[RMDB]
RNA sequence: GGGAACGACUCGAGUAGAGUCGAAAAUUAAGCGAGCGCGAGCGUGUGUUUGUUUGUAUAUGAAUAGCUUCAUUCGUCGGGACGUUGACAUUCAUUCAUGCGUGCACAGAAGAGAGAAACGCCAGCAAAUUGAAUUACGAUUCGUCGUAAUUCAAUUAAAAGAAACAACAACAACAAC
Reactivity to 2A3 in 0.01 (KOAc 150mM, MgCl2 10mM, bicine 150mM(pH8.5), 24C), signal-to-noise 3, nucleotides 027 to 126: u090u070a090a010g020c040g050a010g050c060g000c040g030a030g020c040g020u040g010u020g000u040u060u080g050u040u040u080g090u030a110u020a030u180g060a100a040u050a060g030c040u040u000c030a070u070u040c030g080u030c060g050g070g000a030c030g020u020u030g010a010c010a050u020u040c010a010u070u050c030a010u070g020c020g050u030g020c000a020c010a040g160a200a010g030a020g010a010g020a110a070a000c030g050c060c010a020g050c070a140
Reactivity to DMS in 0.01 (KOAc 150mM, MgCl2 10mM, bicine 150mM(pH8.5), 24C), signal-to-noise 6, nucleotides 027 to 126: u000u010a100a110g010c030g010a120g010c040g020c070g010a080g020c060g030u000g020u000g010u000u010u010g010u000u000u000g010u010a080u010a050u000g000a060a060u000a090g010c070u000u000c040a080u010u000c040g010u010c160g000g010g010a060c110g020u000u000g000a060c080a060u000u000c050a050u000u010c060a040u010g010c050g010u000g000c060a050c070a080g000a070a080g000a140g000a100g000a070a090a090c110g020c050c070a060g020c140a070

Chemical mapping of a 177-nucleotide RNA with 2A3 and DMS. The DMS profile rests on 7,596 reads.